[RMDB]
RNA sequence: GGGAACGACUCGAGUAGAGUCGAAAAGAUAUGGAAUUAGGAGCCGCUGGAGCCGAGUCGGAAACGAUAUCUCCAGAACUACGGUGACUAAUUCCUAAGUCAAAACAAUCGCCUUCGGGCGAUUGAACUAAUUGUCCUGGUUCGCCAGGACAAUUAGAAAAGAAACAACAACAACAAC
Reactivity to DMS in 0.01 (KOAc 150mM, MgCl2 10mM, bicine 150mM(pH8.5), 24C), signal-to-noise 2, nucleotides 027 to 126: g000a030u000a300u010g000g010a010a000u000u000a000g020g020a300g000c040c000g020c010u000g000g000a000g020c300c180g020a150g020u000c000g000g000a050a040a110c000g000a020u020a040u000c000u000c000c020a050g000a100a040c090u030a250c050g000g000u000g000a300c020u000a000a010u000u000c000c000u010a000a040g000u000c000a070a040a160a140c040a000a010u000c010g020c000c010u000u000c220g020g020g000c000g000a010u000u000g010a130a260